[RMDB]
RNA sequence: GGGAACGACUCGAGUAGAGUCGAAAAGAUAUGGAGGCUAUGUUCGCGUGAACUACAGCCGCCCUCGCACUCGGAAACGAGUGAACUACGAGUAACAAGCUGCACGCGAACAUAGCCUCCUAAGUCACAUCACGUAUUGGUUCGCCAAUACGUGAUGAAAAGAAACAACAACAACAAC
Reactivity to DMS in 0.01 (KOAc 150mM, MgCl2 10mM, bicine 150mM(pH8.5), 24C), signal-to-noise 2, nucleotides 027 to 126: g020a040u000a300u000g000g020a000g020g010c000u010a020u000g040u000u000c040g040c020g030u000g010a140a050c160u000a300c010a020g030c000c020g000c300c240c000u000c010g000c020a020c000u020c000g040g000a090a170a230c000g000a010g010u000g050a050a020c140u020a300c020g000a020g000u000a010a160c300a160a090g020c020u000g000c000a000c000g010c020g000a020a020c000a000u000a030g000c000c000u000c010c000u000a010a050g020u000c000a170
This 177-nucleotide RNA was probed chemically with DMS. The reactions ran in a buffer of 150 mM KOAc, 10 mM MgCl2 and 150 mM bicine (pH 8.5), at 24 C. It was measured as part of the RMDB library TTRINS. The DMS profile rests on 1,444 reads.